[RMDB]
RNA sequence: GGGAACGACUCGAGUAGAGUCGAAAACAUCUUCGUCUUCUUGUUCAGGAGAAGAAUAUUCAUCUUCAUAUUCGUCUUGUUCAGGGGAAGUAAGAUAAUCCUCCUCUUCCUCUUCAGGAGACGACUGCCUACAACUGGUGUUCGCACCAGUUGUAGGAAAAGAAACAACAACAACAAC
Reactivity to DMS in 0.01 (KOAc 150mM, MgCl2 10mM, bicine 150mM(pH8.5), 24C), signal-to-noise 2, nucleotides 027 to 126: c120a090u010c090u010u000c000g000u000c000u000u000c010u010u000g000u010u000c070a070g010g000a040g020a070a090g010a010a000u000a020u020u000c190a120u000c140u020u000c080a070u000a210u000u000c010g000u000c000u000u000g030u000u000c080a030g010g010g010g000a010a020g010u000a020a080g010a050u000a120a110u000c120c120u000c030c060u000c020u010u000c020c010u000c040u010u000c160a030g000g000a000g010a060c030g010a020c300u000g010
Reactivity to 2A3 in 0.01 (KOAc 150mM, MgCl2 10mM, bicine 150mM(pH8.5), 24C), signal-to-noise 3, nucleotides 027 to 126: c030a150u070c040u050u010c000g040u000c000u010u020c010u080u120g020u020u040c040a010g050g070a030g030a300a080g050a060a020u100a040u120u110c120a210u040c160u190u060c040a010u030a030u090u040c060g100u000c060u010u050g040u070u040c040a020g000g000g030g000a000a000g030u110a130a010g020a120u160a110a130u120c010c020u010c000c020u030c010u020u030c010c000u030c000u080u100c090a040g000g000a010g000a000c000g030a010c050u050g050
This 177-nucleotide RNA was probed chemically with DMS and 2A3. 2A3 adducts were read by reverse transcription with SuperScript II with manganese. The RNA was probed in 150 mM KOAc, 10 mM MgCl2 and 150 mM bicine (pH 8.5) at 24 C. The DMS profile rests on 1,341 reads.